[RMDB]
RNA sequence: GGGAACGACUCGAGUAGAGUCGAAAAUUAGACUUAAGGGAGGUGCACCUGUAAAAAAAGUAGCCUUUGGCGGUGAUCAAGUACAUGAGGUUGCUGCUGUAAGAAGUGUUACUGUCGAGUACAACAUAGACUGUCAUGUUCGCAUGACAGAAAAGAAACAACAACAACAAC
Reactivity to DMS in 0.01 (KOAc 150mM, MgCl2 10mM, bicine 150mM(pH8.5), 24C), signal-to-noise 9, nucleotides 027 to 129: u040u040a060g010a090c070u010u020a080a100g000g000g000a060g030g030u010g000c040a060c030c030u040g030u050a000a000a040a050a050a050a020g000u000a030g000c020c030u010u010u010g010g010c040g010g040u000g000a040u000c020a050a080g010u040a070c190a070u000g030a080g000g000u020u010g020c000u000g010c010u000g020u040a040a080g020a040a050g000u030g010u010u000a010c010u020g020u030c050g000a090g030u000a040c140a010a050c090a040u010a080g020a140
Reactivity to 2A3 in 0.01 (KOAc 150mM, MgCl2 10mM, bicine 150mM(pH8.5), 24C), signal-to-noise 9, nucleotides 027 to 129: u050u020a030g020a040c050u060u100a060a100g050g020g010a030g020g020u030g000c020a010c010c030u030g070u120a020a060a020a010a000a030a030g020u030a010g010c000c000u030u020u130g030g000c010g000g010u020g010a020u060c050a100a090g070u080a150c060a170u140g070a040g050g010u020u020g010c000u000g000c000u020g060u110a050a030g050a040a010g060u070g020u170u030a020c010u020g050u090c030g010a020g020u040a030c050a090a000c020a090u110a050g090a050
This 170-nucleotide RNA was probed chemically with DMS and 2A3. For DMS, 104,782 sequencing reads were counted. For 2A3, 33,850 sequencing reads were counted.